[RMDB]
Record summary:
The record gives the reactivity of an RNA of 207 nucleotides to DMS and 2A3. The data come from the RNA Mapping Database (RMDB), library M2RFPK. DMS adducts were read by reverse transcription with MarathonRT. DMS (dimethyl sulfate) methylates the pairing face of unpaired adenines and cytosines. 2A3 is a SHAPE reagent: it acylates the 2'-hydroxyl of flexible nucleotides of all four kinds. Values cover nucleotides 27 to 156. For 2A3, 4,514 sequencing reads were counted.
RNA sequence: GGGAACGACUCGAGUAGAGUCGAAAAAGAUCCACGCUACGGCGUGGAUCACACGUUCAUCCCUAUUGGGACGGAAGUAGGCAUAGUGCCGAAGGAACGCAUUAGUCAUGCGCUACGGCGCAUGACACACAUCAGAGUCACUUCGGUGACUCUGAAACGAUGGAUAAUGGUUCGCCAUUAUCCAUCGAAAAGAAACAACAACAACAAC
Reactivity to DMS in 0.01 (KOAc 150mM, MgCl2 10mM, bicine 150mM(pH8.5), 24C), signal-to-noise 2, nucleotides 027 to 156: a040g040a020u010c000c010a020c020g030c000u000a110c200g100g000c020g100u020g000g020a000u000c000a000c030a060c020g020u010u010c040a240u000c000c000c020u000a200u000u000g010g010g000a020c000g030g000a060a060g020u000a200g000g000c010a210u000a080g020u000g020c000c040g020a160a180g010g000a110a070c080g050c040a130u000u000a050g020u000c060a060u010g010c020g020c010u000a050c300g020g020c020g000c000a010u000g000a000c020a040c100a060c100a110u000c000a020g000a030g000u000c000a000c000u000u000c300g080g020u010g010a010c000u010c000u000g020a000a020a070
Reactivity to 2A3 in 0.01 (KOAc 150mM, MgCl2 10mM, bicine 150mM(pH8.5), 24C), signal-to-noise 5, nucleotides 027 to 156: a000g000a010u000c000c000a000c000g020c010u040a030c240g100g000c010g000u000g000g000a000u000c000a000c000a010c000g000u020u010c010a020u030c020c020c020u150a300u190u300g010g000g000a000c010g010g050a030a020g000u010a010g020g000c040a100u130a230g130u170g180c010c000g010a010a000g030g020a010a010c020g000c040a060u080u160a030g000u010c000a000u010g000c000g000c010u030a040c250g070g000c000g000c000a000u000g000a000c000a000c000a000c000a100u040c010a000g000a000g010u020c000a010c020u080u120c220g090g000u000g000a000c010u000c000u000g000a000a010a000